The record gives the reactivity of an RNA of 207 nucleotides to DMS and 2A3.

[RMDB]
RNA sequence: GGGAACGACUCGAGUAGAGUCGAAAAUAGAGGUUCGUGGUAGGAGAGCGUUCUAAGGGCGGUGAAGUCAGACCGGAAGGACUGGUGGAGCGCUUAGAAGUGAGAAUGCCGGUAUGAGUAGCGAAAGAAGGGUGAGAAUCCCUUCCACCGAAUAUCUACUAGACUAAUAGUUCGCUAUUAGUCUAGUAAAAGAAACAACAACAACAAC
Reactivity to DMS in 0.01 (KOAc 150mM, MgCl2 10mM, bicine 150mM(pH8.5), 24C), signal-to-noise 3, nucleotides 027 to 156: u000a070g010a020g000g020u000u000c040g050u000g030g020u000a050g000g000a090g010a130g030c010g020u000u000c030u000a040a070g020g000g050c040g020g050u010g000a110a160g020u010c010a050g010a120c000c020g060g030a140a120g010g000a120c060u000g000g000u000g000g010a180g050c040g010c030u000u000a050g020a060a070g010u000g000a060g010a110a100u000g030c040c010g000g030u000a070u010g010a100g000u000a080g020c060g020a080a090a080g000a020a030g000g010g030u010g000a230g000a280a130u000c020c000c000u000u000c000c000a180c080c030g000a070a090u000a140u010c030u000
Reactivity to 2A3 in 0.01 (KOAc 150mM, MgCl2 10mM, bicine 150mM(pH8.5), 24C), signal-to-noise 6, nucleotides 027 to 156: u130a020g040a040g030g020u080u120c070g010u060g040g010u040a040g030g040a050g010a010g020c020g040u020u000c020u040a060a080g220g300g040c080g070g150u060g030a030a010g010u030c020a000g020a070c000c030g030g040a050a050g020g010a030c010u020g000g020u040g010g020a020g010c050g000c010u010u020a020g000a050a030g050u040g030a040g030a070a060u090g020c020c020g010g000u070a030u070g030a040g050u080a020g030c050g030a050a030a040g010a000a020g010g000g000u010g010a020g010a020a030u030c000c000c000u010u000c010c000a030c010c020g070a070a040u080a050u150c020u050
Values are in units of 0.01, from 0 to 300, in steps of 10.
The DMS profile rests on 5,231 reads.
The 2A3 profile rests on 4,908 reads.